[RMDB]
Chemical mapping of a 177-nucleotide RNA with DMS and 2A3.
RNA sequence: GGGAACGACUCGAGUAGAGUCGAAAAUACGAUAUCUUCACACCAGAAUGAAAUACGGACGAAUGUAUCAUCUGUAUUUCCGGUAGCUAGAUGCAACCACGUGAAGAUAGAUGAUACGUUGAGAUCAGUCCGUCGAGCAUUUCGAUGCUCGAUGGACAAAAGAAACAACAACAACAAC
Reactivity to DMS in 0.01 (KOAc 150mM, MgCl2 10mM, bicine 150mM(pH8.5), 24C), signal-to-noise 2, nucleotides 027 to 126: u090a040c070g000a130u000a010u000c010u000u000c000a020c010a300c140c030a140g030a140a090u020g030a010a020a020u000a000c000g010g020a040c030g030a010a110u000g020u000a010u000c000a040u000c000u000g000u000a000u000u000u000c000c300g000g000u020a060g080c000u000a100g000a160u050g010c020a140a010c000c000a100c180g000u000g000a000a000g000a000u000a000g000a060u030g000a020u000a010c040g000u010u000g010a110g000a090u010c150a130
Reactivity to 2A3 in 0.01 (KOAc 150mM, MgCl2 10mM, bicine 150mM(pH8.5), 24C), signal-to-noise 2, nucleotides 027 to 126: u230a010c010g030a020u030a000u020c010u010u010c000a000c010a010c000c060a050g090a100a110u150g000a000a020a000u000a010c000g010g020a000c030g060a060a050u000g000u070a040u060c000a010u000c000u000g000u000a010u000u000u000c000c050g000g000u000a010g000c030u050a060g010a110u210g040c010a050a030c000c010a060c020g010u020g000a000a000g000a000u000a000g050a030u090g010a000u000a000c000g000u020u040g000a020g000a060u030c020a020

Background:
The RNA was probed in 150 mM KOAc, 10 mM MgCl2 and 150 mM bicine (pH 8.5) at 24 C. Source: RMDB library OK1LIB, as collected in RNAgym. For 2A3 the reverse transcriptase was SuperScript II with manganese.